This 207-nucleotide RNA was probed chemically with 2A3 and DMS. 2A3 adducts were read by reverse transcription with SuperScript II with manganese. The DMS profile rests on 3,857 reads. The data come from the RNA Mapping Database (RMDB), library M2RFPK. Conditions: 150 mM KOAc, 10 mM MgCl2 and 150 mM bicine (pH 8.5), 24 C.
RNA sequence: GGGAACGACUCGAGUAGAGUCGAAAAACUGACGGUACGCCUUCAGAACGGUAGAAAAGAUGGUUUGAAAACCACGCCUUCUACCAAUAUAGUAAAUAAAUAGGCGGAGCGGUCAUACGUGACCGCAAAAACAUAUUCAGCUUCGGCUGAAUAUGAAGGAAAGAAAUUAGUUCGCUAAUUUCUUUCCAAAAGAAACAACAACAACAAC
Reactivity to 2A3 in 0.01 (KOAc 150mM, MgCl2 10mM, bicine 150mM(pH8.5), 24C), signal-to-noise 4, nucleotides 027 to 156: a000c010u020g010a020c030g020g000u050a000c090g050c020c000u000u010c010a020g010a180a030c070g020g010u000a000g030a010a020a000a010g070a300u030g020g040u060u110u230g160a200a190a000a000c000c000a000c000g030c000c000u000u000c000u000a000c000c000a010a000u110a010u030a010g060u050a000a040a160u070a050a120a030u130a040g010g000c010g000g030a030g010c000g000g000u010c000a010u030a080c190g030u020g000a000c000c000g000c000a010a010a000a000a040c000a000u000a000u000u000c000a000g000c000u010u120c160g140g000c000u000g000a000a000u000a000u000g000a020a010
Reactivity to DMS in 0.01 (KOAc 150mM, MgCl2 10mM, bicine 150mM(pH8.5), 24C), signal-to-noise 2, nucleotides 027 to 156: a090c020u020g020a050c050g050g000u000a020c050g010c010c010u000u000c050a080g010a060a110c110g030g010u010a020g010a030a010a010a020g000a050u010g000g000u000u000u040g010a100a040a120a080c010c000a010c000g030c010c000u000u000c020u000a010c000c000a050a070u000a120u000a120g000u000a090a070a150u000a040a060a150u020a030g020g020c020g020g000a130g010c000g040g020u000c000a080u000a050c170g040u000g000a020c000c010g030c010a000a030a080a070a100c010a000u000a000u000u000c000a010g000c010u000u010c300g070g020c000u010g000a030a000u000a000u000g000a060a120